[RMDB]
RNA sequence: GGGAACGACUCGAGUAGAGUCGAAAAGCACGGAGACAUGCACGGAAACGUUGACGGAGGCUCCAUGUCGAACGUGGCUGUCCGAGGCCUUCGUAUUUGACUGGUAAUUCAGUCGUUAGGACAGCUACAGUAUGGUCCCUUUCGAGGGACCAUACUGAAAAGAAACAACAACAACAAC
Reactivity to 2A3 in 0.01 (KOAc 150mM, MgCl2 10mM, bicine 150mM(pH8.5), 24C), signal-to-noise 2, nucleotides 027 to 126: g080c030a020c040g040g000a090g000a020c000a000u020g030c080a010c150g020g080a060a070a030c060g070u160u260g070a020c010g000g010a010g000g000c010u000c020c020a000u050g010u020c040g060a190a080c040g000u020g040g000c000u000g000u020c000c010g010a060g020g050c020c000u000u050c010g030u060a170u130u100u170g000a000c000u000g000g100u110a050a120u150u030c000a000g010u000c030g010u070u090a020g030g030a010c010a010g000c010u010a000
Reactivity to DMS in 0.01 (KOAc 150mM, MgCl2 10mM, bicine 150mM(pH8.5), 24C), signal-to-noise 3, nucleotides 027 to 126: g020c060a050c080g010g010a180g000a030c020a030u010g040c170a050c050g000g000a080a090a120c110g000u010u000g030a060c010g000g000a040g010g010c030u000c090c030a030u000g000u000c030g000a080a090c160g020u000g000g000c000u000g000u010c000c000g000a160g000g020c000c020u010u000c030g020u000a100u000u020u010g010a010c000u000g010g010u000a140a150u020u020c000a010g020u010c000g020u010u010a110g010g000a040c000a010g010c000u000a060
Conditions: 150 mM KOAc, 10 mM MgCl2 and 150 mM bicine (pH 8.5), 24 C.
Chemical mapping of a 177-nucleotide RNA with 2A3 and DMS.
The 2A3 profile rests on 2,761 reads.
For DMS the reverse transcriptase was MarathonRT.